Structure probing data (2A3 and DMS) for a 177-nucleotide construct.
Conditions: 150 mM KOAc, 10 mM MgCl2 and 150 mM bicine (pH 8.5), 24 C.
2A3 adducts were read by reverse transcription with SuperScript II with manganese.
Source: RMDB library TTRDES, as collected in RNAgym.
[RMDB]
RNA sequence: GGGAACGACUCGAGUAGAGUCGAAAAGAUAUGGAAAUGGUCAAGUUGAGACGUCUCUCGGAAACGAGAGAUACGUCAAUGAUGCUUGAGCCAUUUCCUAAGUCAAAUCCCGUCUUCGGACGGGAAAGUACAUAUGUGAGUUCGCUCACAUAUGUACAAAAGAAACAACAACAACAAC
Reactivity to 2A3 in 0.01 (KOAc 150mM, MgCl2 10mM, bicine 150mM(pH8.5), 24C), signal-to-noise 4, nucleotides 027 to 126: g000a010u020a010u080g000g010a000a020a000u010g010g010u020c010a010a010g010u030u100g100a050g000a040c000g010u010c000u000c000u000c010g000g020a050a030a020c000g000a000g010a000g000a030u050a030c000g000u000c000a040a110u270g150a060u290g000c000u010u010g020a020g050c010c000a000u000u000u000c000c000u000a010a000g010u000c010a050a000a150u040c010c000c000g000u000c000u030u050c290g200g010a000c010g000g000g010a020a010a010
Reactivity to DMS in 0.01 (KOAc 150mM, MgCl2 10mM, bicine 150mM(pH8.5), 24C), signal-to-noise 6, nucleotides 027 to 126: g010a020u010a170u010g010g000a010a010a000u000g000g000u000c000a000a010g020u000u000g010a300g000a020c000g020u000c000u000c000u000c000g000g000a040a040a100c000g000a010g010a010g010a030u000a020c090g010u000c000a090a070u010g000a050u010g000c000u000u000g000a150g020c000c000a010u000u000u000c000c000u000a020a080g000u000c030a110a140a180u000c000c000c000g020u000c000u000u000c240g010g000a010c000g020g000g000a010a000a050